[RMDB]
RNA sequence: GGGAACGACUCGAGUAGAGUCGAAAAGCUAGGGAGCCCACGAUGCCACUGGGCUGACGUCUAGUCAGCGUCUCCAUUAGUCCGAGUAUUUUAAAACGCUCACGGUGAAGUUCGUGACUACGACACAGUCUAAUCACGACUUCGGUUGUGGUUAGACAAAAGAAACAACAACAACAAC
Reactivity to 2A3 in 0.01 (KOAc 150mM, MgCl2 10mM, bicine 150mM(pH8.5), 24C), signal-to-noise 9, nucleotides 027 to 126: g040c040u050a030g020g030g030a020g010c000c010c000a010c030g050a040u090g030c020c010a040c040u030g010g030g000c000u000g020a010c030g030u030c050u050a010g010u000c010a010g040c010g030u000c010u000c010c000a050u050u070a050g030u010c030c020g000a000g010u020a100u010u120u020u090a070a090a010a010c090g010c010u010c010a020c030g030g000u040g030a050a020g030u090u060c010g010u030g020a010c010u030a020c080g020a000c010a000c010a070
Reactivity to DMS in 0.01 (KOAc 150mM, MgCl2 10mM, bicine 150mM(pH8.5), 24C), signal-to-noise 9, nucleotides 027 to 126: g010c040u010a060g010g010g010a090g000c030c020c020a060c090g010a090u010g010c040c040a070c080u010g010g000g010c020u000g000a060c060g000u020c060u020a070g000u000c020a080g010c020g010u010c010u000c030c030a060u010u010a080g020u010c060c070g000a060g010u010a060u020u020u020u030a050a070a080a100c150g000c030u000c010a090c040g000g010u010g010a060a080g000u010u010c020g010u000g000a060c020u000a040c120g000a050c080a100c190a110
This 177-nucleotide RNA was probed chemically with 2A3 and DMS.